[RMDB]
RNA sequence: GGGAACGACUCGAGUAGAGUCGAAAAUCUCUAUUGCCGUGCGCAUAUAGAACAUCCUGAUGUCUCUGGUGUUUGUAAAUAUAAGGGUAAGUUUGUCCAAAUCCCUGCUCAGUGUGUCCGUGACCCUCCUAUGUAGAACGUUCGCGUUCUACAUAGGAAAAGAAACAACAACAACAAC
Reactivity to 2A3 in 0.01 (KOAc 150mM, MgCl2 10mM, bicine 150mM(pH8.5), 24C), signal-to-noise 3, nucleotides 027 to 126: u020c000u010c010u050a060u020u080g030c030c030g170u080g030c070g020c020a010u090a010u050a190g040a020a000c010a060u060c020c030u040g030a060u090g080u050c000u010c030u080g050g030u030g040u020u090u080g050u030a080a090a070u150a040u020a070a050g020g000g010u010a040a060g060u050u090u130g050u000c010c000a000a090a040u050c030c000c000u000g010c010u000c050a060g010u030g010u010g020u120c010c000g040u030g030a050c000c000c000u010
Reactivity to DMS in 0.01 (KOAc 150mM, MgCl2 10mM, bicine 150mM(pH8.5), 24C), signal-to-noise 2, nucleotides 027 to 126: u000c050u000c000u010a070u010u000g020c020c030g010u000g010c120g020c010a050u010a060u000a050g000a040a090c120a080u000c030c040u000g000a090u000g000u000c050u000c040u000g000g010u010g000u000u000u000g000u010a060a070a070u000a150u020a100a080g010g010g020u010a070a130g010u000u010u000g000u000c050c050a030a130a120u000c030c000c010u000g000c030u000c050a090g020u010g000u000g010u000c020c050g010u010g000a100c020c020c030u010
Description: The record gives the reactivity of an RNA of 177 nucleotides to 2A3 and DMS. For DMS the reverse transcriptase was MarathonRT. Reactivities are rounded to 0.1 and cut off at 0 and 3. For 2A3 the reverse transcriptase was SuperScript II with manganese. The reactions ran in a buffer of 150 mM KOAc, 10 mM MgCl2 and 150 mM bicine (pH 8.5), at 24 C.